[RMDB]
RNA sequence: GGGAACGACUCGAGUAGAGUCGAAAAAUUGAUUUGUGACGUCGCCUUGCAGUGUUAACUUGGCUCUCAUGAACCUCUUUGAUCUUCCACAAAGGGUAGGCUACGGGUGAAACCUCUUAGGCUAAAAGAAAUCUAUGUUCUUCGGAACAUAGAUUUCAAAAGAAACAACAACAACAAC
Reactivity to 2A3 in 0.01 (KOAc 150mM, MgCl2 10mM, bicine 150mM(pH8.5), 24C), signal-to-noise 2, nucleotides 027 to 126: a000u090u110g030a040u040u020u160g050u020g020a000c040g030u020c060g010c020c000u030u070g000c020a050g040u010g050u280u100a020a030c010u020u050g060g000c000u000c000u000c020a040u060g070a050a050c000c010u010c010u070u010u020g050a080u040c070u090u040c040c000a040c020a050a070a020g070g000g030u030a040g030g000c010u040a010c030g030g000g050u040g110a100a030a040c010c000u000c030u020u060a060g050g010c020u020a000a050a020a070
Reactivity to DMS in 0.01 (KOAc 150mM, MgCl2 10mM, bicine 150mM(pH8.5), 24C), signal-to-noise 3, nucleotides 027 to 126: a090u010u000g010a080u000u000u000g010u010g000a050c100g010u000c130g020c030c020u000u010g010c060a070g020u010g010u000u010a050a120c040u010u000g010g010c020u000c020u000c050a050u000g010a060a060c090c000u000c020u000u010u000g000a080u010c050u000u000c060c050a140c080a040a070a060g000g000g020u000a050g010g010c030u000a060c140g010g000g010u000g010a090a090a130c090c010u000c070u000u000a060g000g010c050u000a050a040a120a120